This 177-nucleotide RNA was probed chemically with DMS and 2A3. The RNA was probed in 150 mM KOAc, 10 mM MgCl2 and 150 mM bicine (pH 8.5) at 24 C. DMS adducts were read by reverse transcription with MarathonRT.
RNA sequence: GGGAACGACUCGAGUAGAGUCGAAAAGACGACUAGUCCCACUUCUACUACUGAAUCUUGCUUGAAUCUCCGCUACGUCGAGAGCAACACAACAAAAAUGGGGCGACUCUCAAUGACUCCACAGCGAACGUACUACUAGGUUCGCCUAGUAGUACGUAAAAGAAACAACAACAACAAC
Reactivity to DMS in 0.01 (KOAc 150mM, MgCl2 10mM, bicine 150mM(pH8.5), 24C), signal-to-noise 7, nucleotides 027 to 126: g010a090c100g000a070c080u000a150g010u010c020c010c020a140c120u000u000c060u000a090c090u010a090c090u000g010a100a090u000c060u000u010g020c050u000u010g020a110a090u010c030u000c040c040g000c050u000a080c150g010u010c060g010a070g000a040g010c020a050a050c060a050c060a030a040c100a040a060a070a080a140u000g000g010g010g000c060g000a090c160u000c040u010c050a070a100u010g010a110c030u010c040c060a060c120a050g010c090g020a090
Reactivity to 2A3 in 0.01 (KOAc 150mM, MgCl2 10mM, bicine 150mM(pH8.5), 24C), signal-to-noise 5, nucleotides 027 to 126: g050a020c080g020a030c060u070a020g050u030c010c010c020a040c010u050u050c030u060a160c010u010a030c040u050g080a090a080u040c030u060u150g030c020u050u070g080a130a120u050c010u000c040c020g030c050u120a090c060g120u140c030g050a030g010a000g070c010a030a020c040a000c000a190a000c040a060a130a050a050a050u070g000g000g010g020c020g060a090c020u000c000u020c040a030a130u100g040a050c010u030c040c030a060c020a050g100c050g060a060